[RMDB]
RNA sequence: GGGAACGACUCGAGUAGAGUCGAAAAGCCGGGGUUUUUCGCGAGGAGUUUACCGGCGGGAUUGCUGCGUUGUGCCUGGUCAGGGGCCAACAGCGCGGUGAAAUACAUACUUGACCUAAACCUGUAGAUGCUUCGUGUGGAAUGUUCUCGGACGGGGGACUUAAAGAUAGUUCGCUAUCUUUAAGUCAAAAGAAACAACAACAACAAC
Reactivity to 2A3 in 0.01 (KOAc 150mM, MgCl2 10mM, bicine 150mM(pH8.5), 24C), signal-to-noise 4, nucleotides 027 to 156: g020c000c000g000g010g000g020u020u060u020u070u140c050g010c020g050a040g040g000a060g030u070u080u050a040c020c010g000g000c060g010g040g000a080u120u120g000c020u010g000c000g010u010u000g050u090g010c000c010u040g000g040u080c060a080g040g020g000g010c010c020a020a010c000a010g000c010g000c020g010g000u060g030a120a110a030u210a030c060a010u110a050c040u080u090g040a030c000c010u020a080a070a030c010c020u030g020u060a030g010a050u070g020c030u030u040c040g040u030g010u060g070g050a050a040u060g070u130u070c020u030c010g030g010a020c040g000g010g000g010
Reactivity to DMS in 0.01 (KOAc 150mM, MgCl2 10mM, bicine 150mM(pH8.5), 24C), signal-to-noise 2, nucleotides 027 to 156: g020c010c020g030g020g040g010u000u000u000u000u000c030g020c050g040a110g030g000a100g010u000u000u000a080c030c040g030g020c030g040g010g010a120u000u000g030c020u000g010c020g000u010u000g000u020g010c010c000u000g010g030u000c140a160g010g010g000g010c000c100a090a020c040a030g000c020g010c000g020g030u000g000a050a110a170u000a120c100a140u010a080c080u000u010g020a120c020c000u000a070a140a050c020c040u000g000u000a090g020a070u010g000c020u000u000c020g000u000g010u000g030g010a060a060u000g010u000u000c020u000c010g000g010a100c040g010g010g000g020